[RMDB]
RNA sequence: GGGAACGACUCGAGUAGAGUCGAAAAAGGCAGCUUGCCGGCUUUUAAGCUACGGACGAUGCAAACGUAGCAGGCAUCGAAUUUUCGGCCCUUCGAAAAGCUGAGAUGAGCUCAGCAAGGGAAUCAACAGUAUUCGUGACUUCGGUCACGAAUACUGAAAAGAAACAACAACAACAAC
Reactivity to DMS in 0.01 (KOAc 150mM, MgCl2 10mM, bicine 150mM(pH8.5), 24C), signal-to-noise 1, nucleotides 027 to 126: a020g010g010c050a060g000c030u000u010g010c040c020g010g020c000u000u000u000u030a080a150g010c000u000a010c020g020g000a070c130g010a150u010g030c110a040a080a050c050g000u000a040g010c010a050g010g090c030a010u000c040g050a110a190u000u010u000u010c040g000g000c000c010c080u000u010c120g010a010a050a090a090g000c010u010g000a030g020a300u000g000a120g010c000u010c020a010g020c030a050a000g000g010g000a040a060u000c050a080a160